Source information: An RNA of 207 nucleotides, treated with DMS and 2A3 and read out base by base. The reactions ran in a buffer of 150 mM KOAc, 10 mM MgCl2 and 150 mM bicine (pH 8.5), at 24 C.
[RMDB]
RNA sequence: GGGAACGACUCGAGUAGAGUCGAAAAGCGCAUGCACUCUACAUUGACGUCACGCAUAUAGGCAAAUAUGUAUUGGUCUGUAGAUUGUUAAAGUUCGGGCAUAAAGAGACGUCACCUCCUGAUAGAGGAGAAAUGGCAAGUACCGAUCUCACCGGAGUCCCCGACUUUAAUUCGUUAAAGUCGGGGAAAAAGAAACAACAACAACAAC
Reactivity to DMS in 0.01 (KOAc 150mM, MgCl2 10mM, bicine 150mM(pH8.5), 24C), signal-to-noise 1, nucleotides 027 to 156: g000c050g060c050a150u010g000c020a020c100u040c020u000a070c020a080u000u000g000a030c010g120u010c090a130c130g050c010a130u000a030u010a030g010g020c220a120a140a070u000a020u000g030u000a090u000u000g020g020u000c040u000g000u000a020g020a080u000u000g010u030u030a090a090a180g000u010u000c010g000g000g030c040a090u030a080a110a160g020a050g000a080c060g000u010c020a050c060c010u000c000c010u000g030a170u010a120g010a020g000g000a060g010a000a030a050u000g000g010c000a050a060g000u010a120c070c020g010a130u000c030u000c040a140c060c010g020g000a100g030
Reactivity to 2A3 in 0.01 (KOAc 150mM, MgCl2 10mM, bicine 150mM(pH8.5), 24C), signal-to-noise 1, nucleotides 027 to 156: g000c040g010c040a020u110g010c030a000c020u000c000u000a010c000a120u020u120g020a000c000g000u040c070a020c060g000c020a010u010a000u070a100g240g000c100a110a120a010u020a010u000g020u000a060u020u170g030g000u010c020u000g000u000a000g010a010u000u020g010u030u040a210a050a070g040u030u010c040g000g000g010c020a030u090a170a070a000g050a000g000a000c040g000u030c000a010c060c020u020c000c000u020g140a260u210a220g170a030g050g000a030g000a020a070a020u030g000g020c040a070a000g010u020a010c000c030g010a100u040c090u080c000a010c100c010g040g000a010g110
It was measured as part of the RMDB library OK3TST.